[RMDB]
RNA sequence: GGGAACGACUCGAGUAGAGUCGAAAAGAACCCGCGUUCGCGCGGGUUCAAAGGACUACCCGUCAGGGUUAAGGCCAUACGGACAGCCGGGUGCACUGCCGAAAACCAUUUUGUUCGCAAAAUGGAAACAUUGUAAGUACUUCGGUACUUACAAUGUAAAAGAAACAACAACAACAAC
Reactivity to 2A3 in 0.01 (KOAc 150mM, MgCl2 10mM, bicine 150mM(pH8.5), 24C), signal-to-noise 2, nucleotides 027 to 126: g000a030a000c010c010c000g030c020g020u010u050c220g020c020g020c030g070g020g000u010u000c000a010a010a000g000g000a040c010u060a060c020c000c010g060u120c110a080g060g030g000u070u100a070a030g010g000c030c000a040u060a090c030g020g040a020c010a020g040c010c010g050g020g010u040g020c040a010c060u020g000c010c000g040a090a050a010a050c000c010a000u020u000u000u020g020u020u060c190g030c130a000a000a000a020u020g020g000a080a090
Reactivity to DMS in 0.01 (KOAc 150mM, MgCl2 10mM, bicine 150mM(pH8.5), 24C), signal-to-noise 5, nucleotides 027 to 126: g010a020a000c000c000c010g050c020g030u000u020c230g040c020g100c000g000g000g020u000u000c000a010a080a120g010g010a080c050u010a090c020c000c010g010u010c200a100g000g000g010u000u000a060a070g010g010c020c010a100u000a110c070g010g000a070c070a060g010c030c010g010g000g020u000g010c030a060c050u000g010c020c030g000a080a060a120a140c000c000a000u010u000u000u000g010u000u010c180g010c000a010a010a000a010u000g000g000a120a090